[RMDB]
RNA sequence: GGGAACGACUCGAGUAGAGUCGAAAAUGCGACAUCUGUCACCCCAUUGAUCGCCAGGGUUGAUUCGGCUGAUCUGGCUGGCUAGGCGGUGUCCCCUUCCUCCCUCACCGCUCCAUGUGCGUCCCUCUAUCAGGCCAGGGUUCGCCCUGGCCUGAUAAAAAGAAACAACAACAACAAC
Reactivity to 2A3 in 0.01 (KOAc 150mM, MgCl2 10mM, bicine 150mM(pH8.5), 24C), signal-to-noise 1, nucleotides 027 to 126: u070g010c050g000a010c010a130u050c060u140g030u060c020a150c010c000c010c010a010u080u200g030a080u030c070g020c000c000a130g010g000g090u100u080g120a150u170u120c070g080g000c100u110g000a090u010c050u010g050g000c040u050g000g020c000u040a060g000g100c000g070g030u050g000u070c010c040c000c010u000u070c000c030u000c000c000c000u050c000a010c000c050g010c000u000c000c000a080u010g010u000g070c050g050u040c030c030c000u050c000
This 177-nucleotide RNA was probed chemically with 2A3. Values are in units of 0.01, from 0 to 300, in steps of 10. For 2A3, 573 sequencing reads were counted. Source: RMDB library RFM100, as collected in RNAgym. 2A3 adducts were read by reverse transcription with SuperScript II with manganese. Conditions: 150 mM KOAc, 10 mM MgCl2 and 150 mM bicine (pH 8.5), 24 C.